[RMDB]
RNA sequence: GGGAACGACUCGAGUAGAGUCGAAAACGCCUUUGUUAUCUCUUGCGGAUGAAAUUACUUUGCAAGAUGGCGGUCUAAAUACAUUGAUUAAGUUCUUUAAAGACGGAUUUUCAAGCGGUAUUUUAACCAUGAAAGGUGCAUCAUUAUCUGGGGAAGCCAGUUAUUUCGUGUUCGCACGAAAUAACUGAAAAGAAACAACAACAACAAC
Reactivity to DMS in 0.01 (KOAc 150mM, MgCl2 10mM, bicine 150mM(pH8.5), 24C), signal-to-noise 1, nucleotides 027 to 156: c030g000c010c020u000u000u000g010u010u020a090u000c060u000c000u000u000g000c030g030g030a090u010g010a160a150a160u010u000a040c060u000u000u000g010c030a010a070g000a070u000g010g050c040g040g030u000c040u020a010a040a080u010a020c040a150u010u000g020a070u010u000a100a170g020u000u000c010u000u000u000a080a100a220g000a040c040g020g000a170u000u000u000u020c020a030a080g040c060g020g050u000a010u010u000u030u020a080a070c030c000a230u030g010a050a060a020g010g000u000g020c050a090u000c080a080u010u000a050u000c010u020g000g010g010g030a090a100g020c100
Reactivity to 2A3 in 0.01 (KOAc 150mM, MgCl2 10mM, bicine 150mM(pH8.5), 24C), signal-to-noise 3, nucleotides 027 to 156: c010g010c010c000u070u050u070g110u140u170a230u060c050u000c010u030u000g010c000g030g080a070u050g050a070a040a050u180u060a080c070u100u080u070g000c000a030a040g010a100u090g000g050c050g010g000u000c010u050a010a040a000u030a020c030a040u010u020g020a030u070u140a090a050g050u080u010c020u060u170u170a120a160a010g090a030c050g010g020a030u070u100u000u090c030a040a000g060c160g150g000u000a020u000u080u020u070a030a000c010c020a020u120g090a050a020a020g000g030u000g050c010a020u040c010a010u090u210a040u110c090u140g010g000g030g040a010a010g100c030

Structure probing data (DMS and 2A3) for a 207-nucleotide construct. The DMS profile rests on 2,188 reads. The reactions ran in a buffer of 150 mM KOAc, 10 mM MgCl2 and 150 mM bicine (pH 8.5), at 24 C.